Structure probing data (DMS and 2A3) for a 177-nucleotide construct. The reactions ran in a buffer of 150 mM KOAc, 10 mM MgCl2 and 150 mM bicine (pH 8.5), at 24 C. Reactivities are given for positions 27 through 126. 2A3 adducts were read by reverse transcription with SuperScript II with manganese. For DMS, 2,050 sequencing reads were counted.

[RMDB]
RNA sequence: GGGAACGACUCGAGUAGAGUCGAAAAGGUAAUGAGUUCGCUCAUUACCAAAGAAAGCGUGCUAGUCUGAGCGCAGAGACUAGCACGGCGCAAAGAAAGAAAAAAGAACCUGGUUCGCCAGGUUCAACCUCAACUAAAUCUUCGGAUUUAGUUGAGGAAAAGAAACAACAACAACAAC
Reactivity to DMS in 0.01 (KOAc 150mM, MgCl2 10mM, bicine 150mM(pH8.5), 24C), signal-to-noise 2, nucleotides 027 to 126: g000g010u000a000a020u000g010a020g020u000u020c230g020c000u000c010a000u000u000a010c000c000a050a090a080g000a100a080a090g000c000g030u000g010c000u010a000g000u000c000u000g040a120g000c060g000c080a070g010a040g000a030c000u000a010g020c010a000c010g000g020c030g030c140a070a070a130g010a080a060a140g010a020a030a040a070a140a170g000a030a000c000c000u010g000g000u000u010c160g040c010c000a000g000g010u000u000c000a050a040
Reactivity to 2A3 in 0.01 (KOAc 150mM, MgCl2 10mM, bicine 150mM(pH8.5), 24C), signal-to-noise 2, nucleotides 027 to 126: g000g000u000a000a000u010g000a010g010u000u150c190g080c080u010c000a000u000u000a000c000c000a000a000a000g000a020a060a010g090c000g000u010g000c000u000a000g000u010c020u070g100a060g130c100g010c090a050g010a000g010a160c000u000a000g000c000a000c000g020g040c030g030c020a150a130a010g070a080a140a040g050a030a110a030a010a010a030g010a000a000c000c000u000g000g050u040u060c200g040c020c000a000g000g000u000u000c000a000a000